[RMDB]
RNA sequence: GGGAACGACUCGAGUAGAGUCGAAAACGGUCGAAAUUCGUUUCGACCGAAUAUGCUAGCUGAGCACAGCUGCAAUGCUAAGCUGAAAGCCAGCUGCAAGGGCGAGUUCGGCGUUCGCGCCGAACAACAGUUCCAUGGAAUUCGUUCCAUGGAACUGAAAAGAAACAACAACAACAAC
Reactivity to 2A3 in 0.01 (KOAc 150mM, MgCl2 10mM, bicine 150mM(pH8.5), 24C), signal-to-noise 3, nucleotides 027 to 126: c000g000g000u000c000g020a010a010a030u150u130c210g050u040u000u000c000g000a000c000c000g000a000a010u120a040u040g050c090u130a020g010c000u000g010a030g040c000a010c000a220g000c000u040g030c100a110a080u220g030c030u080a110a000g010c000u000g030a140a020a000g020c000c010a010g000c000u010g010c020a030a030g130g020g030c090g020a110g050u010u000c000g010g000c010g030u030u060c150g000c010g000c040c000g010a000a000c000a000a000
Reactivity to DMS in 0.01 (KOAc 150mM, MgCl2 10mM, bicine 150mM(pH8.5), 24C), signal-to-noise 4, nucleotides 027 to 126: c010g010g000u000c010g000a000a010a050u000u010c240g020u010u000u000c000g000a010c000c010g010a050a020u000a080u000g010c000u010a020g000c000u000g000a160g010c010a160c010a020g000c020u000g010c090a120a090u010g010c130u010a100a030g010c010u010g010a100a100a080g000c000c010a000g000c000u000g000c020a080a050g000g020g010c180g010a180g010u000u010c000g000g010c000g010u000u010c170g020c030g030c000c000g000a010a000c020a060a150